[RMDB]
RNA sequence: GGGAACGACUCGAGUAGAGUCGAAAAGCUCAAUUGUUUACCAAAGCUGAAACCGCCUUCGGUGGAGUUGAUGUAUUAGUCAAUAAUGCCGGUAUUAUGUCACUCAGCACGGUUGCCGACAGCGACGCAUACAUUGUACCUUCGGGUACAAUGUAUGAAAAGAAACAACAACAACAAC
Reactivity to 2A3 in 0.01 (KOAc 150mM, MgCl2 10mM, bicine 150mM(pH8.5), 24C), signal-to-noise 8, nucleotides 027 to 126: g020c000u010c050a050a150u170u070g050u120u150u060a080c030c020a080a040a030g020c010u020g040a210a080a020c040c050g040c040c040u090u090c040g030g000u030g020g040a050g010u040u030g010a030u030g060u160a190u170u230a090g020u020c010a010a020u050a070a040u080g010c000c000g010g010u040a110u130u080a060u190g050u020c000a020c050u020c010a010g010c010a020c080g030g010u000u040g020c030c020g070a060c030a040g040c020g040a020c040g000
Reactivity to DMS in 0.01 (KOAc 150mM, MgCl2 10mM, bicine 150mM(pH8.5), 24C), signal-to-noise 9, nucleotides 027 to 126: g010c020u010c050a110a130u000u000g010u000u000u000a100c050c030a190a160a120g010c020u000g000a040a090a090c050c100g010c130c110u000u000c040g010g020u000g000g010a300g010u000u010g000a020u000g010u000a110u000u010a150g010u000c020a020a030u000a050a210u010g000c020c020g010g000u010a050u000u000a070u000g000u000c040a060c070u000c030a040g010c030a050c260g000g000u000u010g000c030c030g000a090c110a070g000c030g010a050c180g000
Notes: This 177-nucleotide RNA was probed chemically with 2A3 and DMS. For DMS the reverse transcriptase was MarathonRT. The data come from the RNA Mapping Database (RMDB), library OK2TST. The 2A3 profile rests on 11,391 reads.